[RMDB]
RNA sequence: GGGAACGACUCGAGUAGAGUCGAAAACCAUAGGAUUUCGAUCCUAUGGCCUGCUAUGUGGCGUAAUAGCUUUUCGACUCUACUUGGGUCGUUCCCACGCGAUGGGGACCGGUUUCGACCGGUCCAAUAAGUCAUGCUUAUUCGUAAGCAUGACUUAAAAAGAAACAACAACAACAAC
Reactivity to DMS in 0.01 (KOAc 150mM, MgCl2 10mM, bicine 150mM(pH8.5), 24C), signal-to-noise 3, nucleotides 027 to 126: c010c000a000u000a000g010g000a020u000u000u020c170g010a020u000c000c000u000a000u000g000g010c140c130u000g020c020u010a010u000g020u010g010g020c100g030u000a130a030u000a050g000c000u000u000u000u000c000g000a020c000u000c000u000a000c000u000u000g000g000g010u010c000g010u000u000c000c000c000a000c050g010c110g000a080u000g010g010g010g010a000c000c000g000g000u000u000u020c200g010a020c000c000g010g000u000c000c000a020a030